RNA sequence: GGGAACGACUCGAGUAGAGUCGAAAAAUCAGAGGGCGCUAUCAUGCAAACUAGGAUUGUCUGCUCAUGCACAGAACCAACUACCGAUAACUAACAGUGCAUGAAGGUUAGUUAUUCCAUAUUCAUUAAAACUCGUAAUUCUUCGGAAUUACGAGAAUCAUUCGGAGCAGUUCGCUGCUCCGAAUGAAAAAGAAACAACAACAACAAC
Reactivity to 2A3 in 0.01 (KOAc 150mM, MgCl2 10mM, bicine 150mM(pH8.5), 24C), signal-to-noise 1, nucleotides 027 to 156: a000u040c030a030g010a010g030g020g000c040g000c020u090a120u300c080a140u300g000c010a080a000a020c040u000a010g020g010a040u000u060g080u030c010u010g000c000u000c020a000u020g000c040a010c000a000g040a110a080c080c020a050a070c110u110a100c100c080g060a020u000a010a000c000u000a010a020c000a060g060u020g040c010a060u020g040a030a000g080g000u000u000a000g000u000u000a010u030u120c040c000a160u140a040u100u130c020a040u090u220a010a030a030a080c000u000c000g010u000a020a000u010u000c000u000u060c220g030g000a010a000u000u010a000c000g000a010g000a000a000

Conditions: 150 mM KOAc, 10 mM MgCl2 and 150 mM bicine (pH 8.5), 24 C. Structure probing data (2A3) for a 207-nucleotide construct. For 2A3 the reverse transcriptase was SuperScript II with manganese.